[RMDB]
RNA sequence: GGGAACGACUCGAGUAGAGUCGAAAACGUUGUCCGGAAUUACUGGGCGUAAAGAGCUUGUAGGCGGCUUGUCGCGUCGAUCGUGAAAACUUGGGGCUCAACCCCAAGCUUGCGGUCGAUACGGGCAUCGCUGAUCACUUUUCGAAGUGAUCAGCGAAAAAGAAACAACAACAACAAC
Reactivity to 2A3 in 0.01 (KOAc 150mM, MgCl2 10mM, bicine 150mM(pH8.5), 24C), signal-to-noise 3, nucleotides 027 to 126: c040g020u030u060g010u060c000c000g050g020a160a150u150u140a170c040u130g010g040g000c040g000u010a040a060a010g120a010g000c010u090u080g080u110a090g020g090c040g000g010c080u100u030g020u040c030g000c000g050u000c000g000a010u000c000g020u020g140a030a050a000a050c000u010u000g000g000g000g010c010u100c210a200a300c000c000c010c000a000a000g010c000u020u060g010c000g000g000u000c000g000a000u020a000c010g010g000g000c000a020
Reactivity to DMS in 0.01 (KOAc 150mM, MgCl2 10mM, bicine 150mM(pH8.5), 24C), signal-to-noise 2, nucleotides 027 to 126: c100g020u000u010g000u010c030c040g000g070a220a030u020u040a090c080u030g000g020g040c020g030u060a000a100a130g000a170g010c000u000u010g000u000a000g000g000c110g000g020c190u050u010g000u040c020g020c000g050u000c000g000a010u000c020g020u000g020a050a010a090a070c000u000u030g010g020g030g030c070u060c300a160a300c000c000c000c000a010a000g010c120u020u000g000c000g000g000u030c000g020a000u000a000c030g000g000g000c000a060
Chemical mapping of a 177-nucleotide RNA with 2A3 and DMS. 2A3 adducts were read by reverse transcription with SuperScript II with manganese. High DMS reactivity at an A or C suggests that its Watson-Crick edge is free. The reactions ran in a buffer of 150 mM KOAc, 10 mM MgCl2 and 150 mM bicine (pH 8.5), at 24 C. For DMS, 2,115 sequencing reads were counted. The 2A3 profile rests on 1,333 reads. Source: RMDB library OK1LIB, as collected in RNAgym.